[RMDB]
RNA sequence: GGGAACGACUCGAGUAGAGUCGAAAAGAGCGAUUAGACAAAGGGGUAGAGCUACAUAUUAGAUAGCUGUAUAAUCGUUCAAGUUGCAUCAAAACAUCUUCAAUAUUUAUUACUUACUUUCCUUUCUGCCAGAGUACGGUAUUCGUACCGUACUCAAGUUGGGAAAAUGCUUCGGCAUUUUCCCAACAAAAGAAACAACAACAACAAC
Reactivity to 2A3 in 0.01 (KOAc 150mM, MgCl2 10mM, bicine 150mM(pH8.5), 24C), signal-to-noise 2, nucleotides 027 to 156: g000a000g000c000g000a000u000u010a030g030a050c080a070a060a050g060g040g110g000u060a000g010a000g010c000u010a000c030a030u270a120u150u180a140g150a280u040a010g010c000u000g010u020a030u010a010a010u000c000g020u010u000c010a000a030g030u080u050g010c000a120u020c010a100a050a050a120c000a090u060c030u300u060c100a110a150u050a300u210u250u150a160u110u110a070c030u030u010a030c000u100u080u080c010c000u010u150u000c010u100g080c050c000a000g030a000g000u000a000c000g000g000u000a030u000u030c030g000u010a000c010c000g010u000a030c000u000c000a000a000
Chemical mapping of a 207-nucleotide RNA with 2A3. The RNA was probed in 150 mM KOAc, 10 mM MgCl2 and 150 mM bicine (pH 8.5) at 24 C.